[RMDB]
RNA sequence: GGGAACGACUCGAGUAGAGUCGAAAAGAUAUGGAGCACCUCGAGGAUGAUACUAUCAUUGUACCCUCUCGGAAACGAGAGGGUACAAUGACGAAUAUCAUCUACCCACCGAGAUGCUCCUAAGUCACACAGUAAUGGUCUUCGGACCAUUACUGUGAAAAGAAACAACAACAACAAC
Reactivity to DMS in 0.01 (KOAc 150mM, MgCl2 10mM, bicine 150mM(pH8.5), 24C), signal-to-noise 1, nucleotides 027 to 126: g000a040u020a300u000g000g020a010g010c010a010c050c000u000c000g000a080g020g010a000u000g010a000u000a000c060u000a270u000c000a010u000u000g000u010a000c000c020c000u020c010u000c000g000g000a110a090a210c000g000a010g010a030g000g010g010u000a000c000a000a000u000g010a010c100g010a100a130u000a000u000c010a000u000c010u000a050c040c070c150a300c170c000g000a000g010a040u000g000c000u000c000c010u010a000a030g010u010c030a290